[RMDB]
RNA sequence: GGGAACGACUCGAGUAGAGUCGAAAAAAAAGAUAUGGACAUAAGAACUACACAUGCGAAUCCAACAGCCUGCGUCGGAAACGACGCAGGACAUGGAUUCGGUGUGCUUAUGUCCUAAGUCACAAAACAACGUAAAACAGUUCGCUGUUUUACGUUGAAAAGAAACAACAACAACAAC
Reactivity to 2A3 in 0.01 (KOAc 150mM, MgCl2 10mM, bicine 150mM(pH8.5), 24C), signal-to-noise 3, nucleotides 027 to 126: a000a000a000a000g070a030u120a030u100g000g010a000c000a000u020a020a010g040a120a020c140u300a040c250a000c020a000u240g300c030g000a010a000u000c010c010a070a040c080a190g040c000c010u010g000c000g020u000c010g010g010a050a110a060c010g020a000c000g010c000a000g000g000a000c000a040u020g000g010a000u010u010c000g000g000u000g000u000g000c010u010u020a010u020g000u000c000c000u000a000a030g010u010c000a020c110a110a200a070a090
Reactivity to DMS in 0.01 (KOAc 150mM, MgCl2 10mM, bicine 150mM(pH8.5), 24C), signal-to-noise 3, nucleotides 027 to 126: a100a040a100a030g000a060u010a300u010g000g000a020c010a010u000a000a000g010a090a020c060u030a300c010a020c000a010u010g020c000g000a000a000u000c000c000a020a060c300a190g010c010c000u010g010c010g000u000c000g010g000a120a070a160c010g020a030c000g000c000a000g000g010a010c070a090u010g000g000a000u000u000c000g000g020u000g010u000g000c000u000u000a000u000g010u000c000c000u010a010a020g020u000c040a110c230a090a040a070a150